[RMDB]
RNA sequence: GGGAACGACUCGAGUAGAGUCGAAAAGGAUAGAUAAGCAGAGGGCCCAGGUGGCUAACAAAGACUUCCUGUGGAAAUGAGCCUUGAGUCAGGUUUUUAUUACAGAAUUAAUUGGAGAAGGGAAGGCAAGGCUUGCUGAGUGGAGGGCUAGCAGGAAUAUAGGCAUAAAUUUCGAUUUAUGCCUAUAAAAAGAAACAACAACAACAAC
Reactivity to DMS in 0.01 (KOAc 150mM, MgCl2 10mM, bicine 150mM(pH8.5), 24C), signal-to-noise 2, nucleotides 027 to 156: g000g000a200u000a070g000a120u000a050a110g000c050a110g010a110g040g030g000c000c070c010a060g040g030u000g010g020c030u010a060a080c090a090a070a180g000a080c030u000u010c020c010u000g000u020g050g010a020a070a100u030g010a060g030c010c010u000u000g040a080g020u020c080a140g010g020u000u000u000u020u000a070u040u000a300c040a130g020a120a170u000u010a060a150u020u010g030g000a080g000a100a080g020g020g000a050a050g000g000c030a050a040g010g000c030u010u020g020c020u010g010a120g040u010g000g010a090g040g000g000c050u000a090g000c030a070g020g000a080a200
Reactivity to 2A3 in 0.01 (KOAc 150mM, MgCl2 10mM, bicine 150mM(pH8.5), 24C), signal-to-noise 2, nucleotides 027 to 156: g040g020a040u100a050g060a040u080a160a090g010c040a030g020a030g100g030g000c000c050c000a010g010g050u070g060g000c030u030a030a050c070a190a110a020g050a080c000u020u030c010c010u020g000u100g010g010a070a030a120u090g010a030g000c020c020u010u040g030a040g020u050c030a020g040g000u040u070u010u090u140a100u050u070a010c010a000g100a110a090u100u120a090a050u270u230g040g020a050g020a060a030g000g020g010a030a010g010g000c010a030a040g000g000c000u000u010g010c030u060g030a010g020u080g020g020a020g000g030g000c020u020a040g030c010a000g010g040a010a010